[RMDB]
RNA sequence: GGGAACGACUCGAGUAGAGUCGAAAACCCCCAAGUUUCGACUUGGGGGAAUUAAAAUCAGCGGUAAAUAAUUAGCUCGCGUUACCGCUGAACGCGAGCUUAGAGCAAUGCGCUUCGGCGCAUUGAAGGAAAAUAUCAGUUUCGACUGAUAUUUUCCAAAAGAAACAACAACAACAAC
Reactivity to 2A3 in 0.01 (KOAc 150mM, MgCl2 10mM, bicine 150mM(pH8.5), 24C), signal-to-noise 3, nucleotides 027 to 126: c000c000c000c000c000a000a000g010u020u050u120c160g110a020c000u000u000g000g020g010g000g040a000a020u130u110a050a040a010a080u020c010a000g020c000g230g200u180a060a080a040u090a030a130u150u180a070g010c010u000c000g000c010g000u010u030a130c010c000g000c000u010g000a000a000c000g000c020g000a000g000c000u040u150a090g010a020g070c000a000a010u010g000c010g020c000u040u030c250g060g000c000g000c000a000u010u000g000a000a050
Reactivity to DMS in 0.01 (KOAc 150mM, MgCl2 10mM, bicine 150mM(pH8.5), 24C), signal-to-noise 3, nucleotides 027 to 126: c010c000c000c000c000a000a010g010u000u000u010c110g010a020c000u000u000g010g020g010g000g000a000a010u000u010a050a070a110a070u000c010a020g020c000g010g000u010a040a050a030u000a040a060u000u000a110g000c000u000c000g010c010g010u000u000a080c050c030g010c010u000g010a010a010c010g010c000g000a010g010c020u010u010a050g010a180g010c010a010a000u000g000c000g020c000u000u010c230g030g000c000g010c000a010u000u000g010a080a110